Structure probing data (DMS) for a 177-nucleotide construct. For DMS, 835 sequencing reads were counted.

[RMDB]
RNA sequence: GGGAACGACUCGAGUAGAGUCGAAAAUAUCCCCAGGGCCCGUGUGCGCAGGGGAUCGGUGGGCGGCAGCAUUUGGUUGGUGGCGAUAAAGUGGAAAAGCCCGUCCGGACUGAAGGUCUCGUGGGCGUGGCCACGUACAAUUCGUUGUACGUGGCCAAAAAGAAACAACAACAACAAC
Reactivity to DMS in 0.01 (KOAc 150mM, MgCl2 10mM, bicine 150mM(pH8.5), 24C), signal-to-noise 1, nucleotides 027 to 126: u010a190u010c000c000c020c060a210g030g000g010c010c040c210g030u010g030u020g020c020g000c090a080g000g010g020g010a030u000c050g020g070u000g000g020g020c090g010g010c050a060g000c120a050u000u020u000g020g000u000u020g010g030u000g010g030c020g010a080u000a030a050a100g040u000g050g000a120a030a130a100g000c000c000c000g000u030c050c070g000g010a060c000u000g030a150a130g020g010u000c030u000c270g010u000g010g020g030c040g010
The reactions ran in a buffer of 150 mM KOAc, 10 mM MgCl2 and 150 mM bicine (pH 8.5), at 24 C. For DMS the reverse transcriptase was MarathonRT. The data come from the RNA Mapping Database (RMDB), library OK2TST.